The record gives the reactivity of an RNA of 177 nucleotides to 2A3 and DMS.
The data come from the RNA Mapping Database (RMDB), library OK2TRN.
The reactions ran in a buffer of 150 mM KOAc, 10 mM MgCl2 and 150 mM bicine (pH 8.5), at 24 C.
DMS adducts were read by reverse transcription with MarathonRT.
For 2A3 the reverse transcriptase was SuperScript II with manganese.
High 2A3 reactivity points to a flexible backbone, as in loops and unpaired stretches.
The DMS profile rests on 2,609 reads.
[RMDB]
RNA sequence: GGGAACGACUCGAGUAGAGUCGAAAAGCGUCUAAUGUUGACCACCGUCCUGGCGGCGGGCUUUGCCAUGCAUUUUAUCAAAGGUACCCCGCCUCCUUUGAUGCCGCCUCUUUUGUGAUGCGCGACGCGCCCAUUCCAUGUUCGCAUGGAAUGGGCGAAAAGAAACAACAACAACAAC
Reactivity to 2A3 in 0.01 (KOAc 150mM, MgCl2 10mM, bicine 150mM(pH8.5), 24C), signal-to-noise 3, nucleotides 027 to 126: g060c050g000u050c050u110a190a110u230g090u180u150g050a020c000c000a010c030c060g020u020c020c060u040g070g020c040g000g000c020g000g020g010c010u170u200u180g000c010c020a070u090g020c040a120u050u030u180u200a040u140c030a070a090a010g020g020u040a070c050c010c010c010g050c000c000u030c000c000u000u030u060g050a040u090g060c050c000g020c050c000u050c010u140u170u100u140g150u120g020a040u040g000c020g020c030g030a020c030g000
Reactivity to DMS in 0.01 (KOAc 150mM, MgCl2 10mM, bicine 150mM(pH8.5), 24C), signal-to-noise 3, nucleotides 027 to 126: g020c110g010u000c020u000a070a070u010g030u010u000g000a070c090c080a090c100c070g020u010c020c050u000g010g030c090g000g030c010g020g000g000c130u010u010u010g010c020c030a050u000g020c120a100u010u020u000u010a120u000c050a020a060a050g020g010u010a190c300c000c000c040g010c060c060u010c000c000u000u000u010g010a050u000g020c070c000g010c000c000u000c030u000u000u010u000g000u010g000a020u000g010c060g020c060g010a050c060g010